[RMDB]
RNA sequence: GGGAACGACUCGAGUAGAGUCGAAAAACGCCGCCGUCGGUGGCUUCGACCGGCACGAUCGCCGUCGCACCGGUGGGCACUGGCGCACCGGUCAUGAUCCGGUGCGCAGUCACAGGCUGCAGCGUCACCCCGACGGAGCAUUCGUGCUCCGUCGGGGAAAAGAAACAACAACAACAAC
Reactivity to 2A3 in 0.01 (KOAc 150mM, MgCl2 10mM, bicine 150mM(pH8.5), 24C), signal-to-noise 1, nucleotides 027 to 126: a020c050g030c000c000g040c020c000g000u000c020g080g000u040g030g030c180u010u010c020g170a040c000c020g030g000c000a020c120g080a080u150c210g060c180c050g040u050c020g000c000a000c000c030g050g000u180g000g010g020c230a170c160u190g050g000c020g000c000a000c000c000g010g000u120c170a280u240g040a180u000c020c020g000g020u020g010c000g000c010a000g000u000c000a010c000a010g030g000c010u060g000c000a000g000c000g030u110c110a110